[RMDB]
RNA sequence: GGGAACGACUCGAGUAGAGUCGAAAACCUUAAACACUGUUUCUACUACUACUCCUUUACUCUAAGUUUCCACGGGAAGAUAUUAACAGUAAUUAUUAGUACUUUAGUGGAAUUUUAAUGUUGAAGAAGCUGAAAUGUGUUUCGACACAUUUCAGCUAAAAGAAACAACAACAACAAC
Reactivity to 2A3 in 0.01 (KOAc 150mM, MgCl2 10mM, bicine 150mM(pH8.5), 24C), signal-to-noise 1, nucleotides 027 to 126: c000c000u000u100a190a080a010c060a030c110u140g010u000u000u000c020u010a040c110u000a050c000u000a040c060u010c000c020u010u050u020a010c000u020c070u020a010a010g010u000u010u000c000c000a000c010g220g110g000a010a010g110a010u000a000u020u020a150a040c070a010g070u110a170a110u110u170a030u010u030a020g000u020a020c010u060u000u000a000g010u000g010g020a000a000u000u000u000u000a010a000u040g070u040u020g020a070a020g010a050
Overview: Structure probing data (2A3) for a 177-nucleotide construct. The reactions ran in a buffer of 150 mM KOAc, 10 mM MgCl2 and 150 mM bicine (pH 8.5), at 24 C. For 2A3 the reverse transcriptase was SuperScript II with manganese.